The data come from the RNA Mapping Database (RMDB), library VIROID.
Structure probing data (2A3 and DMS) for a 177-nucleotide construct.
DMS (dimethyl sulfate) methylates the pairing face of unpaired adenines and cytosines.
For 2A3 the reverse transcriptase was SuperScript II with manganese.
For DMS the reverse transcriptase was MarathonRT.
[RMDB]
RNA sequence: GGGAACGACUCGAGUAGAGUCGAAAACACCUCGGAAGGCCGCCGCGGACCUGCAAAGAAGAAGAUAGGGGCAGAGGGGGAGUGAGCCUCGUCGUCGACGAAGGGGUGCACUCCAAAGCUCCGAACUCAACAUAUCAUAGUUCGCUAUGAUAUGUUGAAAAGAAACAACAACAACAAC
Reactivity to 2A3 in 0.01 (KOAc 150mM, MgCl2 10mM, bicine 150mM(pH8.5), 24C), signal-to-noise 3, nucleotides 027 to 126: c010a000c000c020u010c010g070g050a060a050g080g000c020c000g040c040c030g060c070g030g020a150c000c020u040g020c040a070a070a060g090a070a010g010a050a010g050a150u170a140g020g010g010g010c020a020g050a060g110g080g040g020g000a040g020u010g020a020g010c010c000u000c000g040u000c000g060u090c080g080a280c040g010a060a030g050g010g000g000u030g010c000a010c010u000c010c020a010a020a010g010c000u000c000c000g010a050a040c020u000
Reactivity to DMS in 0.01 (KOAc 150mM, MgCl2 10mM, bicine 150mM(pH8.5), 24C), signal-to-noise 3, nucleotides 027 to 126: c090a110c030c010u000c050g010g000a130a050g020g010c040c030g000c060c050g020c080g030g000a040c030c050u000g000c100a060a100a110g010a070a080g010a080a060g000a090u000a110g010g010g000g020c020a070g000a260g010g010g010g000g000a020g020u000g010a200g000c010c020u010c000g020u000c020g010u020c190g000a110c050g010a020a040g010g000g000g010u010g010c020a000c000u000c000c010a030a100a130g000c030u000c030c000g000a080a100c150u000